Structure probing data (DMS and 2A3) for a 177-nucleotide construct. For 2A3, 830 sequencing reads were counted. Values cover nucleotides 27 to 126. The reactions ran in a buffer of 150 mM KOAc, 10 mM MgCl2 and 150 mM bicine (pH 8.5), at 24 C.
RNA sequence: GGGAACGACUCGAGUAGAGUCGAAAAUGUGCCUGCAAUUGAACCUUGUAUAUUUACUCAUCUCUUAACAGAAUUUUUGGGUAUUCCAAAUUGUAGAUAUGCCAAGAAUUAAAUCCUGAGCAAUAGGGUAUAUAGGCGUUUUCGAACGCCUAUAUACAAAAGAAACAACAACAACAAC
Reactivity to DMS in 0.01 (KOAc 150mM, MgCl2 10mM, bicine 150mM(pH8.5), 24C), signal-to-noise 2, nucleotides 027 to 126: u010g020u000g020c010c030u010g000c090a060a060u020u000g010a150a180c090c020u000u000g010u000a050u000a040u000u000u000a060c000u000c200a060u010c060u000c010u020u000a090a100c180a050g010a020a090u000u000u000u000u000g000g010g010u000a120u010u010c020c040a000a080a070u010u000g010u020a040g000a010u000a000u000g000c070c030a010a030g000a040a050u000u010a110a040a070u020c090c060u010g010a080g010c060a030a100u000a040g000g000
Reactivity to 2A3 in 0.01 (KOAc 150mM, MgCl2 10mM, bicine 150mM(pH8.5), 24C), signal-to-noise 1, nucleotides 027 to 126: u100g060u030g020c000c020u030g060c030a030a130u070u020g030a020a010c030c000u000u020g050u000a080u010a020u080u130u040a060c030u050c030a220u000c030u010c000u140u130a040a070c000a090g110a160a140u070u050u000u030u020g060g000g040u130a170u190u180c000c020a030a100a130u130u160g020u000a040g000a050u030a000u080g130c020c020a010a020g030a030a020u030u040a000a030a050u090c040c030u070g000a050g000c000a030a080u080a120g140g000